Conditions: 150 mM KOAc, 10 mM MgCl2 and 150 mM bicine (pH 8.5), 24 C. An RNA of 177 nucleotides, treated with DMS and 2A3 and read out base by base. It was measured as part of the RMDB library OK1LIB. For DMS the reverse transcriptase was MarathonRT. DMS (dimethyl sulfate) methylates the pairing face of unpaired adenines and cytosines. The DMS profile rests on 1,066 reads.
RNA sequence: GGGAACGACUCGAGUAGAGUCGAAAAACGCGCUGGCCGCCACCGCAUUUCACCUUCUCACGGGGGCCCCGCCAUACCAGCAUGCCAAUUCGGUCGCGGUGAUCAGCCAGCAUCUCACCGCACCACCUGCGGUAAAUCGUUUCGACGAUUUACCGCAAAAAGAAACAACAACAACAAC
Reactivity to DMS in 0.01 (KOAc 150mM, MgCl2 10mM, bicine 150mM(pH8.5), 24C), signal-to-noise 1, nucleotides 027 to 126: a220c120g000c090g130c000u000g000g000c020c100g030c100c100a100c000c000g000c000a160u000u100u000c110a050c140c000u000u000c000u100c020a140c100g020g000g000g000g000c040c040c000c040g000c020c100a060u000a050c120c040a030g000c080a060u000g000c000c050a070a060u140u020c090g000g000u000c130g010c020g000g010u000g080a080u060c100a030g020c040c030a030g040c090a000u070c180u000c050a070c020c000g030c000a020c010c040a010c120c060
Reactivity to 2A3 in 0.01 (KOAc 150mM, MgCl2 10mM, bicine 150mM(pH8.5), 24C), signal-to-noise 2, nucleotides 027 to 126: a000c080g020c000g000c070u000g040g030c020c000g010c020c010a040c000c040g010c030a060u010u100u060c070a120c010c000u100u000c060u060c040a110c040g010g000g010g040g000c000c020c000c010g010c010c000a030u060a090c000c000a010g040c020a000u080g040c030c010a060a140u080u200c050g020g000u070c180g010c000g030g000u010g010a070u040c040a030g010c010c010a010g010c030a040u040c030u010c000a010c000c000g020c000a030c000c000a030c000c020